Notes:
Structure probing data (DMS and 2A3) for a 177-nucleotide construct. Source: RMDB library OK1LIB, as collected in RNAgym. DMS (dimethyl sulfate) methylates the pairing face of unpaired adenines and cytosines. For DMS, 2,188 sequencing reads were counted.

RNA sequence: GGGAACGACUCGAGUAGAGUCGAAAAAAGUCGAUGGAGCUGUCGGUAGGAACGCCCAUCGCUAGUCGCCUCGCGCACACGAGGGACAAGCUCCUCUGCAAACAGGAGGCGCUGCAACUGCCGCAGUAAAUACGCGGAGUUUCGACUCCGCGUAUUUAAAAGAAACAACAACAACAAC
Reactivity to DMS in 0.01 (KOAc 150mM, MgCl2 10mM, bicine 150mM(pH8.5), 24C), signal-to-noise 2, nucleotides 027 to 126: a040a070g020u040c000g000a140u020g020g000a140g090c000u010g000u020c000g040g070u000a010g020g000a080a030c060g000c050c000c030a010u000c020g020c020u040a100g020u000c050g030c020c010u000c000g020c060g010c150a050c200a100c020g030a010g020g000g000a020c070a080a060g000c010u010c000c000u000c050u000g020c060a110a090a130c300a300g000g020a000g000g000c040g020c040u000g000c080a050a060c010u000g000c000c020g020c200a030g000u000
Reactivity to 2A3 in 0.01 (KOAc 150mM, MgCl2 10mM, bicine 150mM(pH8.5), 24C), signal-to-noise 3, nucleotides 027 to 126: a030a020g030u010c010g000a010u010g000g060a280g070c050u050g150u190c020g020g000u050a050g060g090a040a110c050g050c010c000c000a000u020c000g000c010u040a040g020u020c070g120c090c010u040c020g060c000g060c010a040c000a020c050g000a010g000g010g000a010c020a010a010g010c010u030c000c000u030c000u050g090c190a120a300a230c050a110g000g060a010g020g000c010g000c000u060g020c020a080a050c010u020g010c010c000g000c010a030g070u040